[RMDB]
RNA sequence: GGGAACGACUCGAGUAGAGUCGAAAAUGUCCAAACAGGGUGAUUGUUUCCCUCAAAUGCAUGCCAGAUAAAGUGCCCUUGGGUACAAGAAAGAUGUAUCUCCAGCUGUUGAUAAGAGGGGGAAGCCUAUGGAGAAUCGAUUCGUCGAUUCUCCAUAAAAAGAAACAACAACAACAAC
Reactivity to DMS in 0.01 (KOAc 150mM, MgCl2 10mM, bicine 150mM(pH8.5), 24C), signal-to-noise 5, nucleotides 027 to 126: u030g010u030c010c020a120a100a140c250a080g010g000g000u000g000a170u000u000g000u000u000u000c000c010c000u000c020a060a090a080u010g010c020a030u030g020c020c090a030g010a060u010a040a110a150g000u000g000c010c010c040u010u010g030g020g030u000a010c010a100a100g000a060a100a120g000a110u020g000u010a030u000c000u000c030c180a110g000c020u000g000u000u000g000a130u030a070a140g000a110g000g010g000g010g000a030a130g000c040c060
Reactivity to 2A3 in 0.01 (KOAc 150mM, MgCl2 10mM, bicine 150mM(pH8.5), 24C), signal-to-noise 4, nucleotides 027 to 126: u140g060u000c000c000a010a090a040c100a020g040g060g030u060g080a150u060u140g090u060u060u030c000c000c000u000c030a130a140a020u110g000c020a010u170g010c040c000a000g010a050u120a120a120a000g050u040g030c000c000c050u060u230g070g000g000u020a030c030a060a070g140a120a170a020g130a080u160g030u160a020u000c020u020c030c000a000g000c000u030g010u110u020g060a120u110a180a080g030a040g030g040g030g000g020a020a020g040c000c010

Chemical mapping of a 177-nucleotide RNA with DMS and 2A3.
For 2A3 the reverse transcriptase was SuperScript II with manganese.
Reactivities are given for positions 27 through 126.
Source: RMDB libraries RFM100 and RFMREP, as collected in RNAgym.
Conditions: 150 mM KOAc, 10 mM MgCl2 and 150 mM bicine (pH 8.5), 24 C.